Chemical mapping of a 177-nucleotide RNA with DMS and 2A3. The reactions ran in a buffer of 150 mM KOAc, 10 mM MgCl2 and 150 mM bicine (pH 8.5), at 24 C. For 2A3 the reverse transcriptase was SuperScript II with manganese. The data come from the RNA Mapping Database (RMDB), library TTRDES. For DMS the reverse transcriptase was MarathonRT.

RNA sequence: GGGAACGACUCGAGUAGAGUCGAAAAGAUAUGGAUGCUUCGUUGCAGUCGAAGAACGGAAAUCGGAAACGAUUUCCGGGAGACUGGGACGAGAGCAUCCUAAGUCAAACCUACCUUCGGGUAGGAACUAACAGGUGAGGUUCGCCUCACCUGUUAGAAAAGAAACAACAACAACAAC
Reactivity to DMS in 0.01 (KOAc 150mM, MgCl2 10mM, bicine 150mM(pH8.5), 24C), signal-to-noise 2, nucleotides 027 to 126: g020a020u000a300u020g000g000a030u000g000c010u000u000c000g010u000u000g000c000a000g000u010c010g020a080a140g010a150a200c020g000g000a030a000a000u000c000g000g000a120a130a230c020g030a010u010u000u000c000c020g010g000g050a050g000a020c010u000g000g000g020a000c000g010a100g030a000g000c010a000u000c000c000u000a030a120g010u000c020a070a100a180c000c000u000a010c000c000u000u000c140g020g000g000u000a000g000g000a060a150
Reactivity to 2A3 in 0.01 (KOAc 150mM, MgCl2 10mM, bicine 150mM(pH8.5), 24C), signal-to-noise 2, nucleotides 027 to 126: g080a050u110a070u150g000g000a010u020g020c010u010u000c030g110u030u100g300c000a010g000u000c000g230a300a040g010a060a000c000g000g000a000a020a000u000c010g000g090a090a080a070c010g020a020u010u000u010c020c030g000g020g000a030g000a000c000u030g060g040g030a000c040g010a090g090a020g000c000a010u000c000c000u000a020a000g010u000c010a110a080a120c000c010u020a000c000c010u020u060c300g140g000g000u000a020g000g000a000a040